[RMDB]
RNA sequence: GGGAACGACUCGAGUAGAGUCGAAAAAUAGAAGGCAAGGAAAGGUGCUCAUGCUAGACACUUACUAAUUUGUAAUGAAAUGAACCUUAUUUGAGCUUUGCAAAAACACGCUACAUUACAAAGGAAGUCCUGCACCUAAAUUCGUUUAGGUGCAGGAAAAAGAAACAACAACAACAAC
Reactivity to DMS in 0.01 (KOAc 150mM, MgCl2 10mM, bicine 150mM(pH8.5), 24C), signal-to-noise 1, nucleotides 027 to 126: a100u020a070g000a100a060g020g000c120a030a110g040g000a040a110a060g040g010u000g020c060u000c020a090u000g060c160u000a030g010a110c130a080c080u000u030a090c120u010a040a080u000u000u000g020u000a010a000u010g000a120a130a110u000g000a130a100c060c020u010u020a130u010u000u000g030a130g000c050u030u000u000g000c130a020a060a020a080a000c160a080c160g030c030u000a140c010a020u020u000a030c030a040a040a060g020g000a070a150g000
Structure probing data (DMS) for a 177-nucleotide construct. Conditions: 150 mM KOAc, 10 mM MgCl2 and 150 mM bicine (pH 8.5), 24 C. The data come from the RNA Mapping Database (RMDB), library OK2TRN.